[RMDB]
RNA sequence: GGGAACGACUCGAGUAGAGUCGAAAAGUGAUGGAGUGGGUUGCCAACUGUCAUUACUCCACUUGGUGCAGAAUAACUGUCAGAAAUCUAUUCACAUAUGCCCAAAGAAGUCUGCCCAGGGUGAAACCACAUCGCUAAUGUUCGCAUUAGCGAUGUGAAAAGAAACAACAACAACAAC
Reactivity to 2A3 in 0.01 (KOAc 150mM, MgCl2 10mM, bicine 150mM(pH8.5), 24C), signal-to-noise 2, nucleotides 027 to 126: g030u030g000a020u050g020g060a080g090u070g000g090g070u190u180g090c020c010a030a010c040u030g040u090c020a040u020u070a030c020u020c020c010a080c040u000u070g000g000u180g000c000a000g020a060a010u080a150a050c020u020g070u130c030a040g050a010a100a010u000c040u050a140u060u150c030a060c030a110u180a080u120g030c030c020c000a020a040a010g070a140a060g030u010c030u000g020c000c000c000a000g030g040g020u050g070a080a040a040c040
Reactivity to DMS in 0.01 (KOAc 150mM, MgCl2 10mM, bicine 150mM(pH8.5), 24C), signal-to-noise 2, nucleotides 027 to 126: g020u010g000a010u020g020g000a020g040u000g020g000g020u000u020g030c030c020a060a100c030u000g000u000c010a050u030u000a070c080u000c020c020a030c030u000u000g000g040u000g030c020a030g030a050a070u010a080a160c090u000g000u000c090a060g000a060a080a110u000c070u020a060u010u000c050a070c060a110u000a090u010g000c020c010c010a060a120a160g000a130a120g010u000c020u000g000c000c010c000a040g000g010g020u020g000a090a090a120c170